[RMDB]
RNA sequence: GGGAACGACUCGAGUAGAGUCGAAAACAGGAAACUGGUUAAUCGUUUUCCUUGGUAGUAUAGCGGAAACCAUAAAUAAGAAGAACUCUAAGUGCUUGAGUAGAGUUAAAAUGAUUAGACAGGCAAUUAAGGUACUCCACGUUCGCGUGGAGUACAACCUUAGCUAUGUGUUCGCACAUAGCUAAGGAAAAGAAACAACAACAACAAC
Reactivity to 2A3 in 0.01 (KOAc 150mM, MgCl2 10mM, bicine 150mM(pH8.5), 24C), signal-to-noise 7, nucleotides 027 to 156: c040a010g060g080a050a020a050c050u120g000g080u150u190a110a100u150c050g000u020u030u030u050c010c010u030u030g080g010u040a080g010u030a060u090a120g060c050g000g030a040a050a060c010c010a050u100a140a110a020u120a080a030g080a050a020g030a040a010c000u000c010u020a020a030g040u040g200c030u040u020g010a010g010u020a000g000a000g000u030u060a020a040a020a060u090g030a030u060u040a010g010a040c010a010g000g030c010a030a030u150u140a170a030g070g000u000a000c000u000c000c000a000c010g010u040u040c150g010c010g070u000g010g000a000g000u000a000c000a000a000
Reactivity to DMS in 0.01 (KOAc 150mM, MgCl2 10mM, bicine 150mM(pH8.5), 24C), signal-to-noise 2, nucleotides 027 to 156: c060a070g020g000a060a080a090c030u000g020g010u000u010a060a080u010c020g000u010u000u010u010c020c030u000u010g030g030u000a090g040u020a120u000a070g020c000g010g010a120a060a080c050c020a080u010a040a050a140u010a060a140g000a120a100g020a070a060c010u000c020u000a030a150g030u000g040c120u000u000g020a130g010u000a050g010a060g000u000u000a010a040a050a070u000g000a080u000u000a060g010a100c020a020g030g010c040a070a120u000u000a090a060g020g000u000a020c000u000c020c000a000c010g020u000u000c260g050c020g060u000g010g000a030g030u000a000c010a020a070